[RMDB]
RNA sequence: GGGAACGACUCGAGUAGAGUCGAAAAGACAAAUAUACUACAGUCGGACGUUUGUGCCGACAUAUAUACUACACUUUACCAAAAAUAUACUACACUAAACUCUAAAUAUACUACAACUCCGCUUCAACGAUAGACCGUGGUUCGCCACGGUCUAUCGAAAAGAAACAACAACAACAAC
Reactivity to 2A3 in 0.01 (KOAc 150mM, MgCl2 10mM, bicine 150mM(pH8.5), 24C), signal-to-noise 3, nucleotides 027 to 126: g080a030c070a000a140a010u110a000u020a110c070u030a040c110a090g000u000c000g030g000a020c020g280u190u290u150g210u220g010c000c000g000a000c000a000u010a000u000a000u000a000c020u000a010c050a000c080u040u070u060a110c030c010a010a020a000a080a000u120a030u070a090c070u000a020c080a000c020u140a020a110a000c020u020c000u080a120a140a140u240a030u020a070c130u020a020c000a000a100c000u000c000c070g000c070u020u080c100a110a100